[RMDB]
An RNA of 177 nucleotides, treated with 2A3 and DMS and read out base by base. The 2A3 profile rests on 10,730 reads. For 2A3 the reverse transcriptase was SuperScript II with manganese. The reactions ran in a buffer of 150 mM KOAc, 10 mM MgCl2 and 150 mM bicine (pH 8.5), at 24 C. Reactivities are rounded to 0.1 and cut off at 0 and 3.
RNA sequence: GGGAACGACUCGAGUAGAGUCGAAAAGAAGAGAAUAAAUAGAGGAGUCAGGGUUCGCACACGCUCCGCGAACCGACGGUAACACUGACUGUGGAGCGGAAAAGGCAGAUACAGGACUGCCAAAGAAGGGAUGGAUAUUAUUCGUAAUAUCCAUCCCAAAAGAAACAACAACAACAAC
Reactivity to 2A3 in 0.01 (KOAc 150mM, MgCl2 10mM, bicine 150mM(pH8.5), 24C), signal-to-noise 6, nucleotides 027 to 126: g090a030a000g060a000g060a110a130u210a150a090a060u230a080g090a040g150g030a020g010u030c020a030g010g100g000u000u000c000g010c000a020c010a010c120g000c010u020c010c010g000c000g000a000a000c010c000g020a050c040g020g050u070a080a010c050a020c080u040g070a020c010u070g080u120g110g000a010g000c000g040g000a040a120a010a010g000g000c010a010g000a030u130a210c030a020g030g120a040c010u000g000c000c000a070a020a000g100a040a090
Reactivity to DMS in 0.01 (KOAc 150mM, MgCl2 10mM, bicine 150mM(pH8.5), 24C), signal-to-noise 4, nucleotides 027 to 126: g010a050a060g010a080g030a070a100u020a080a100a090u050a100g000a120g000g000a080g030u000c000a030g000g000g000u000u000c020g000c000a100c080a160c000g020c020u000c010c070g000c020g000a030a030c030c000g000a080c180g010g030u030a050a040c160a300c050u000g020a010c030u020g010u020g050g000a010g030c020g010g010a080a030a090a110g000g000c020a000g000a070u020a120c180a080g000g000a070c030u000g010c030c000a040a060a090g010a110a120